[RMDB]
This 207-nucleotide RNA was probed chemically with DMS and 2A3. 2A3 adducts were read by reverse transcription with SuperScript II with manganese.
RNA sequence: GGGAACGACUCGAGUAGAGUCGAAAAAGCACUGGUACGUUACGUCGUACCAGUGCAGUCGUUGGGAUGGAACGCAAUUAAAUACAUGUGUGACGUGUAUUUGCGAACGACGUAAUUAUUUUUCAAAAUCACGCUAUCGUGUUCGCACGAUAGCGAAGCAUUGCAAGUAGUUCGCUACUUGCAAUGCAAAAGAAACAACAACAACAAC
Reactivity to DMS in 0.01 (KOAc 150mM, MgCl2 10mM, bicine 150mM(pH8.5), 24C), signal-to-noise 2, nucleotides 027 to 156: a090g030c000a020c000u000g010g010u020a000c000g010u000u000a080c250g070u000c000g050u000a020c000c000a030g010u010g010c000a010g020u000c010g030u000u000g010g010g030a220u010g000g010a070a110c010g000c000a090a170u010u000a030a040a020u000a030c000a030u010g000u000g020u000g030a160c040g000u000g040u000a040u010u010u000g010c060g010a060a130c020g000a190c040g010u000a030a100u000u000a200u000u010u010u000u000c080a060a060a090a120u000c100a150c040g000c010u000a010u000c020g040u000g020u000u000c300g030c020a020c020g020a030u000a010g000c020g030a010a060
Reactivity to 2A3 in 0.01 (KOAc 150mM, MgCl2 10mM, bicine 150mM(pH8.5), 24C), signal-to-noise 5, nucleotides 027 to 156: a000g010c010a000c000u010g000g000u000a010c010g030u080u080a100c200g050u150c000g000u120a000c000c000a000g000u000g000c000a000g010u000c010g010u020u060g040g050g050a120u170g140g040a120a040c020g000c020a010a040u150u140a130a080a000u030a010c000a020u020g100u020g130u160g290a090c050g000u010g000u000a000u010u030u040g010c000g010a020a010c020g030a000c020g010u020a060a040u130u180a100u050u130u020u030u100c080a070a050a040a070u150c050a010c050g010c000u000a000u020c000g010u000g030u100u060c230g010c070a010c000g020a000u000a000g000c000g000a000a000